[RMDB]
RNA sequence: GGGAACGACUCGAGUAGAGUCGAAAAGGAUCUGGGGAAUGCCCAAAGAUGACAGCUCCAGACCUGCCUGCCAGGGUGGCCAGAGCUGCUCUUUCUGAGCGCAUUCUAAACAAAUGGAAGGCAGGCGUCUAUAUGGGUACUUCGGUACCCAUAUAGAAAAAGAAACAACAACAACAAC
Reactivity to DMS in 0.01 (KOAc 150mM, MgCl2 10mM, bicine 150mM(pH8.5), 24C), signal-to-noise 6, nucleotides 027 to 126: g000g010a090u000c010u000g010g000g000g010a090a090u000g010c010c020c060a100a090a140g010a120u010g010a060c050a050g000c010u000c010c020a050g010a050c010c010u010g010c000c000u000g010c030c050a210g000g010g010u010g010g010c110c110a090g000a060g010c060u000g010c060u000c030u000u010u000c140u010g010a070g020c060g020c020a040u000u000c010u010a080a090a120c190a080a070a090u010g010g010a080a060g010g000c010a030g010g010c110g010
Reactivity to 2A3 in 0.01 (KOAc 150mM, MgCl2 10mM, bicine 150mM(pH8.5), 24C), signal-to-noise 3, nucleotides 027 to 126: g060g020a130u020c030u030g000g030g010g060a110a290u120g040c010c010c030a100a130a020g150a120u210g040a030c030a060g010c000u010c010c000a010g000a030c000c000u020g030c000c020u000g000c010c010a040g050g000g010u070g060g000c030c030a020g000a020g050c080u140g040c020u100c010u060u240u040c100u110g010a040g010c050g030c050a020u100u000c010u070a070a080a040c060a010a100a050u150g050g000a030a040g000g000c000a000g000g010c000g010
Source: RMDB library OK2TRN, as collected in RNAgym. The record gives the reactivity of an RNA of 177 nucleotides to DMS and 2A3. 2A3 adducts were read by reverse transcription with SuperScript II with manganese. The reactions ran in a buffer of 150 mM KOAc, 10 mM MgCl2 and 150 mM bicine (pH 8.5), at 24 C. Values cover nucleotides 27 to 126.